The record gives the reactivity of an RNA of 177 nucleotides to 2A3 and DMS.
Reactivities are given for positions 27 through 126.
Values are in units of 0.01, from 0 to 300, in steps of 10.
The 2A3 profile rests on 1,892 reads.
For DMS the reverse transcriptase was MarathonRT.
The DMS profile rests on 1,826 reads.
[RMDB]
RNA sequence: GGGAACGACUCGAGUAGAGUCGAAAAACAAAGACACGCUUCGCAGAUGACCUCCACGUUGGUGCGUGUCGGUAAUGUUGUCAGUCACAGGCAACAGUUAACGAUCUGCGUAAAUAAAAAGAAAAAAUGUAUAGCAUACGUUCGCGUAUGCUAUACAAAAAGAAACAACAACAACAAC
Reactivity to 2A3 in 0.01 (KOAc 150mM, MgCl2 10mM, bicine 150mM(pH8.5), 24C), signal-to-noise 2, nucleotides 027 to 126: a000c030a010a050a020g060a040c000a020c040g040c020u130u150c040g010c010a040g000a010u010g000a010c010c010u040c050c040a140c170g120u070u100g010g000u020g000c000g000u000g010u000c020g020g010u080a100a040u010g010u010u020g010u020c020a020g140u110c070a060c020a150g000g000c000a000a010c010a020g000u010u060a010a010c010g010a000u030c010u000g000c020g010u010a000a030a010u130a010a090a000a020a010g200a040a150a020a020a000a030
Reactivity to DMS in 0.01 (KOAc 150mM, MgCl2 10mM, bicine 150mM(pH8.5), 24C), signal-to-noise 2, nucleotides 027 to 126: a030c040a050a070a090g020a010c010a020c000g000c000u010u000c010g010c030a040g000a010u000g010a020c000c000u000c040c020a080c170g000u000u010g010g020u000g010c010g060u010g000u000c010g000g000u000a100a090u000g010u010u000g000u000c000a060g010u000c300a150c290a070g000g000c010a000a000c000a030g000u000u000a020a000c000g010a020u000c010u000g000c000g000u020a010a050a120u020a060a050a020a080a080g040a020a040a060a050a110a040